Chemical mapping of a 207-nucleotide RNA with DMS and 2A3. The RNA was probed in 150 mM KOAc, 10 mM MgCl2 and 150 mM bicine (pH 8.5) at 24 C. It was measured as part of the RMDB library OK3TST. DMS adducts were read by reverse transcription with MarathonRT.
RNA sequence: GGGAACGACUCGAGUAGAGUCGAAAACUUCAUUAAAGGAUUUACAAAUCCAACCUUUCGAUAGUGUAGAGGUUAUCUGGAAUGAUAAGACAAUUUUUAGAGGAUAUUGUAUAGAUGCAAGAUUAUCUCAAGCAUUUGGACAACAACAGUAUGAAUACCAAAUAGUAGCAUUCGUGCUACUAUUUGGAAAAGAAACAACAACAACAAC
Reactivity to DMS in 0.01 (KOAc 150mM, MgCl2 10mM, bicine 150mM(pH8.5), 24C), signal-to-noise 2, nucleotides 027 to 156: c050u010u000c070a160u020u000a080a080a120g000g000a140u000u000u010a150c100a100a080a040u000c010c020a070a050c050c020u000u000u010c000g010a070u000a060g020u000g020u000a010g020a020g060g000u000u000a030u010c020u000g010g000a090a060u010g010a160u000a110a080g000a100c010a040a090u030u000u000u000u000a120g010a080g000g010a150u000a040u000u010g020u000a120u010a080g010a050u000g060c040a050a300g000a120u010u000a060u000c300u000c020a020a300g000c020a030u000u000u000g030g010a050c010a030a030c030a020a080c030a110g010u000a070u000g000a110a100u000a160
Reactivity to 2A3 in 0.01 (KOAc 150mM, MgCl2 10mM, bicine 150mM(pH8.5), 24C), signal-to-noise 5, nucleotides 027 to 156: c030u110u060c030a110u080u150a130a060a050g040g010a050u080u140u220a190c100a070a130a020u000c000c000a040a050c010c010u050u100u080c070g120a160u120a110g070u080g060u140a010g010a020g030g000u020u050a030u000c060u080g060g070a090a050u060g040a050u050a100a010g040a040c040a070a080u040u070u080u140u180a160g030a050g080g030a040u030a030u060u020g010u020a060u030a060g020a020u030g000c010a040a020g010a050u100u110a110u130c050u020c050a030a050g000c000a000u010u030u070g040g030a020c010a060a020c030a020a010c010a070g060u080a080u140g070a060a050u070a160